[RMDB]
RNA sequence: GGGAACGACUCGAGUAGAGUCGAAAAUCAAUGCCCAUAGGGCAACGCUUAACCAACGAUCCGUUCUUCUUCGCGAAGCGUGAUGGUGUCUAUCUGAUUUUGGCGUUUAUUCUGGCGAUCAUUACGCCCCUUACAAGUCAUUCGUGACUUGUAAGGGAAAAGAAACAACAACAACAAC
Reactivity to 2A3 in 0.01 (KOAc 150mM, MgCl2 10mM, bicine 150mM(pH8.5), 24C), signal-to-noise 4, nucleotides 027 to 126: u080c030a030a050u130g010c010c000c030a080u210a140g040g010g000c010a040a020c030g000c020u140u120a060a080c030c020a040a050c040g070a040u040c030c000g060u050u020c010u080u000c000u050u100c090g070c090g080a050a010g020c010g050u060g020a020u030g030g040u030g030u010c040u060a160u040c060u050g130a150u070u030u090u150g090g010c040g060u060u120u080a150u160u060c100u080g000g000c020g050a050u060c000a010u060u070a050c040g040c030
Reactivity to DMS in 0.01 (KOAc 150mM, MgCl2 10mM, bicine 150mM(pH8.5), 24C), signal-to-noise 8, nucleotides 027 to 126: u010c110a100a200u010g010c010c000c010a200u010a140g030g030g020c030a030a020c150g000c060u000u010a090a140c080c040a060a120c110g010a050u000c030c020g000u000u010c030u000u000c050u000u010c100g020c130g010a050a060g020c300g020u000g010a030u000g010g030u000g010u000c050u000a070u010c120u000g000a080u000u000u000u010g000g000c020g020u000u000u010a100u020u000c050u000g010g000c030g010a050u010c090a070u010u000a080c040g010c040

This 177-nucleotide RNA was probed chemically with 2A3 and DMS. DMS adducts were read by reverse transcription with MarathonRT. It was measured as part of the RMDB library OK2TST. For DMS, 10,072 sequencing reads were counted. The RNA was probed in 150 mM KOAc, 10 mM MgCl2 and 150 mM bicine (pH 8.5) at 24 C.